RNA sequence: GGGAACGACUCGAGUAGAGUCGAAAAUGGGUUUGAUAAGCGAGUCGAGGGAAGCAUGGUGCCUCGAUAAUAAAGUAUGCAUUAAAGAUAAACGCAGAAGAUAAUUUUGCAUUAGCAGCUUAAUUUAGCGCUGCUCAUCCUUCCUCAAUUGCCCACGCGACGGUAUGUCGUUCGCGACAUACCGUCGAAAAGAAACAACAACAACAAC
Reactivity to 2A3 in 0.01 (KOAc 150mM, MgCl2 10mM, bicine 150mM(pH8.5), 24C), signal-to-noise 2, nucleotides 027 to 156: u090g040g000g000u040u250u130g110a040u050a100a000g000c040g030a030g020u020c010g010a030g050g000g020a080a010g010c050a040u060g120g000u040g170c010c000u000c030g000a050u090a100a010u060a010a040a000g070u070a090u100g000c000a010u120u030a140a000a000g090a040u090a030a130a000c050g050c010a020g000a080a010g020a040u130a280a070u100u010u040u060g050c010a010u030u030a020g000c010a010g000c000u100u000a070a110u300u070u100a110g020c060g010c000u000g000c000u000c000a020u020c010c000u010u050c040c000u030c010a020a090u100u040g010c000c010c000a000c000g070
The record gives the reactivity of an RNA of 207 nucleotides to 2A3.